[RMDB]
RNA sequence: GGGAACGACUCGAGUAGAGUCGAAAAUUAAUGAUUGGUUAGUUAUUGGUUAUACACCAUUAUCACUUUUUAAUCCGAAAGAAUCAGAUUUCGCACGCUUAAAGUUAGGCGAUAAUAUUAAAUUUAGGUGAACAUGAACUUUCGAGUUCAUGUUCACAAAAGAAACAACAACAACAAC
Reactivity to DMS in 0.01 (KOAc 150mM, MgCl2 10mM, bicine 150mM(pH8.5), 24C), signal-to-noise 1, nucleotides 027 to 126: u000u020a040a050u010g000a130u000u040g000g010u000u000a060g030u000u040a060u010u000g040g000u010u050a120u030a010c150a110c030c060a030u000u020a020u020c120a090c030u040u000u000u080u000a000a020u000c070c030g000a060a150a100g000a010a050u010c150a030g010a090u000u000u010c040g000c180a140c070g000c050u070u030a010a080a050g000u010u000a050g010g000c000g090a030u030a000a020u000a040u030u050a070a040a120u060u010u020a010g000
Reactivity to 2A3 in 0.01 (KOAc 150mM, MgCl2 10mM, bicine 150mM(pH8.5), 24C), signal-to-noise 3, nucleotides 027 to 126: u170u080a080a080u070g120a040u040u000g060g030u060u020a020g020u000u030a040u050u090g000g080u030u060a140u020a110c100a020c030c000a010u140u030a060u070c020a040c040u010u020u000u010u180a030a050u000c000c010g060a150a010a040g100a050a050u130c030a070g060a240u080u050u020c110g070c010a060c010g020c050u060u150a210a090a070g050u160u130a060g050g000c000g010a000u030a030a000u000a020u100u250a200a080a040u140u090u060a060g150